[RMDB]
RNA sequence: GGGAACGACUCGAGUAGAGUCGAAAAUGCUGUGUAUGCUUAUGCUGCUUGGGAGGUCAGCCAAGGAUGGAGUUACGCGAUAGCUACAUUGACAUUUGCCAUCUCAUGGGUUUCUUGCUAUGUCAAGUAUAACACCGAAUACUCUGGUAUAGCUACACGUGGACCGUAAUUUCGAUUACGGUCCACGAAAAGAAACAACAACAACAAC
Reactivity to 2A3 in 0.01 (KOAc 150mM, MgCl2 10mM, bicine 150mM(pH8.5), 24C), signal-to-noise 1, nucleotides 027 to 156: u070g060c040u000g010u000g000u070a050u230g020c020u040u000a030u230g050c020u070g000c010u000u050g040g000g000a160g120g000u130c100a060g050c020c010a000a050g060g000a040u150g090g020a070g080u130u070a020c040g000c010g020a030u100a150g000c000u000a000c000a090u000u080g010a060c040a020u000u020u110g050c010c010a110u030c020u040c000a100u180g010g000g100u000u000u000c000u080u100g000c000u010a010u020g000u040c020a020a000g010u010a020u010a090a130c200a070c090c050g060a010a060u060a060c060u200c250u010g000g000u000a000u000a000g030c010u040a000c020a000
The data come from the RNA Mapping Database (RMDB), library OK3TST. The record gives the reactivity of an RNA of 207 nucleotides to 2A3. The reactions ran in a buffer of 150 mM KOAc, 10 mM MgCl2 and 150 mM bicine (pH 8.5), at 24 C.